Overview: This 177-nucleotide RNA was probed chemically with 2A3 and DMS. The data come from the RNA Mapping Database (RMDB), library OK1LIB. Conditions: 150 mM KOAc, 10 mM MgCl2 and 150 mM bicine (pH 8.5), 24 C. The DMS profile rests on 3,098 reads.
RNA sequence: GGGAACGACUCGAGUAGAGUCGAAAAACAUAUGACAGAUCUCUUGUGGUUGAUGACGAGGAGACGUCCAUCCUUCUGUAUGACAUAUGGGAACAGGAUAACAGCCAGUGGCUGCAGGAUCAGUGCAAGUUGAACGGAUUUUCGAAUCCGUUCAACUAAAAGAAACAACAACAACAAC
Reactivity to 2A3 in 0.01 (KOAc 150mM, MgCl2 10mM, bicine 150mM(pH8.5), 24C), signal-to-noise 3, nucleotides 027 to 126: a000c020a020u150a040u140g030a050c020a000g060a070u040c010u000c000u100u120g030u060g080g050u070u100g070a170u120g050a030c020g050a060g110g010a100g030a070c060g000u020c040c000a040u010c010c000u050u060c000u040g040u040a120u130g080a020c040a050u220a070u040g030g000g050a110a040c000a020g020g040a070u040a080a040c030a000g030c020c000a040g030u040g070g000c020u000g000c030a050g020g000a070u050c000a020g020u040g100c060a070
Reactivity to DMS in 0.01 (KOAc 150mM, MgCl2 10mM, bicine 150mM(pH8.5), 24C), signal-to-noise 2, nucleotides 027 to 126: a050c050a050u040a040u040g000a050c110a050g000a080u020c010u000c020u000u000g010u000g010g030u000u000g030a080u040g000a120c040g030a010g030g000a050g030a060c080g010u000c020c040a040u010c030c060u000u000c010u000g010u000a060u000g000a080c040a120u000a040u020g000g040g020a110a050c070a090g010g020a050u010a100a110c140a070g010c040c020a200g020u050g000g030c000u010g000c000a030g020g010a060u000c040a040g000u010g000c020a090